[RMDB]
RNA sequence: GGGAACGACUCGAGUAGAGUCGAAAACCACCGCAAUUCGUUGCGGUGGGAAGGUGCAAUUCGCUGUCUGCACCUCAGACGGCCAAUCCGUCAAAGCGAAAACUGGAGGGUCAUUCGUGACCCUCAAGAUUACUCUAAACUUCGGUUUAGAGUAAUCAAAAGAAACAACAACAACAAC
Reactivity to DMS in 0.01 (KOAc 150mM, MgCl2 10mM, bicine 150mM(pH8.5), 24C), signal-to-noise 9, nucleotides 027 to 126: c000c000a010c000c000g010c000a010a020u000u010c200g030u000u000g010c000g010g020u000g000g000g000a030a020g010g010u000g000c010a060a170u000u000c020g020c000u010g010u000c070u010g000c010a010c010c000u010c060a140g000a020c000g000g000c190c270a110a140u010c000c000g000u000c000a030a120a060g000c010g000a040a040a110a100c240u000g010g000a010g000g000g010u000c000a040u000u010c160g010u000g010a010c000c000c000u000c000a010a030
Reactivity to 2A3 in 0.01 (KOAc 150mM, MgCl2 10mM, bicine 150mM(pH8.5), 24C), signal-to-noise 7, nucleotides 027 to 126: c000c000a000c000c000g000c000a020a030u070u060c200g050u110u020g000c000g000g000u010g000g000g010a020a040g010g000u010g000c040a130a300u080u040c010g000c020u020g060u100c030u030g000c000a000c000c000u000c000a020g000a000c000g010g000c090c080a050a090u120c010c000g000u010c010a020a020a000g010c010g030a010a010a020a080c120u170g140g000a000g000g000g000u010c010a020u050u090c140g090u030g000a000c000c000c000u000c000a000a000